[RMDB]
RNA sequence: GGGAACGACUCGAGUAGAGUCGAAAAAGCGACCUGAUACGUCAGGUCGCAAAUGUCAUCAAAAAGGGCUGAAGAAAGAUAUUUCUGCAUUUGAAUCGUAUCACAGCCAGCUUUGAUGGGCAUUGAAUCCAUGCCUCAAGUUCGCUUGAGGCAUGGAAAAAGAAACAACAACAACAAC
Reactivity to DMS in 0.01 (KOAc 150mM, MgCl2 10mM, bicine 150mM(pH8.5), 24C), signal-to-noise 2, nucleotides 027 to 126: a150g000c010g040a000c020c010u000g000a000u000a120c280g010u010c000a000g010g000u020c000g000c010a010a000a020u000g000u000c010a030u000c020a000a000a010a120a140g040g000g020c000u050g000a300a100g010a060a120a100g000a030u010a010u020u020u010c000u020g000c300a090u030u040u030g000a020a070u070c040g030u010a050u000c010a180c020a070g010c020c000a060g000c190u010u000u000g010a000u000g020g030g020c000a010u020u000g030a130a080
Reactivity to 2A3 in 0.01 (KOAc 150mM, MgCl2 10mM, bicine 150mM(pH8.5), 24C), signal-to-noise 3, nucleotides 027 to 126: a010g000c000g000a000c010c000u000g000a010u000a090c270g050u010c010a020g000g000u000c000g000c000a000a000a000u020g010u000c000a000u000c000a000a000a000a030a040g100g030g000c020u010g010a090a040g110a170a200a030g020a040u010a060u020u050u030c040u050g190c090a300u200u120u120g040a060a050u100c080g010u030a030u020c000a000c000a050g000c000c010a000g020c060u020u000u000g000a000u000g060g070g000c000a010u010u030g040a030a020

Notes:
The data come from the RNA Mapping Database (RMDB), libraries RFM100 and RFMREP. An RNA of 177 nucleotides, treated with DMS and 2A3 and read out base by base. For 2A3, 1,758 sequencing reads were counted. For DMS the reverse transcriptase was MarathonRT. The reactions ran in a buffer of 150 mM KOAc, 10 mM MgCl2 and 150 mM bicine (pH 8.5), at 24 C.